The record gives the reactivity of an RNA of 207 nucleotides to 2A3 and DMS.
[RMDB]
RNA sequence: GGGAACGACUCGAGUAGAGUCGAAAACAGCGCGCUUGCUUUUUUGCUUUUGCGCAGCAGCCAAGAGGCUUCACAUUUUUUGCGCUUAGGCAGUUAGGCAGUUAGAGUUCAGCUUCAAGUUGCUUCACAGCGCAGAGAGAGGCGCGCCAUUCACACAGAAAGGUAACCGAUUCGUCGGUUACCUUUCAAAAGAAACAACAACAACAAC
Reactivity to 2A3 in 0.01 (KOAc 150mM, MgCl2 10mM, bicine 150mM(pH8.5), 24C), signal-to-noise 2, nucleotides 027 to 156: c020a010g000c000g000c000g000c000u010u070g290c040u020u150u080u030u120u110g030c030u080u130u080u070g000c030g000c000a000g020c020a000g000c000c030a110a060g050a030g020g020c000u110u090c060a080c050a160u050u060u030u120u170u160g030c040g020c000u040u060a040g120g000c040a040g030u060u040a010g020g070c030a050g040u050u110a030g030a020g040u060u100c050a030g010c030u030u000c010a000a100g020u030u010g030c000u040u050c120a080c030a050g010c010g010c040a000g000a010g000a000g000a000g010g010c000g010c010g010c010c000a020u090u080c020a040c000a000c030a090
Reactivity to DMS in 0.01 (KOAc 150mM, MgCl2 10mM, bicine 150mM(pH8.5), 24C), signal-to-noise 1, nucleotides 027 to 156: c010a050g000c010g020c000g020c050u010u000g000c030u000u000u020u020u020u000g030c000u000u000u000u000g000c010g050c110a100g080c180a070g000c020c030a070a230g000a300g050g000c000u000u020c070a130c050a050u000u020u060u000u000u000g100c040g050c000u000u000a050g010g010c010a100g020u000u000a100g040g010c030a080g010u000u000a120g010a150g020u010u010c080a020g000c010u000u000c070a120a270g000u000u000g000c000u080u010c070a210c060a090g070c220g000c000a100g000a110g000a120g000a160g030g060c110g000c000g040c000c030a140u000u000c070a140c100a100c090a250

For DMS the reverse transcriptase was MarathonRT. The 2A3 profile rests on 1,117 reads. Conditions: 150 mM KOAc, 10 mM MgCl2 and 150 mM bicine (pH 8.5), 24 C.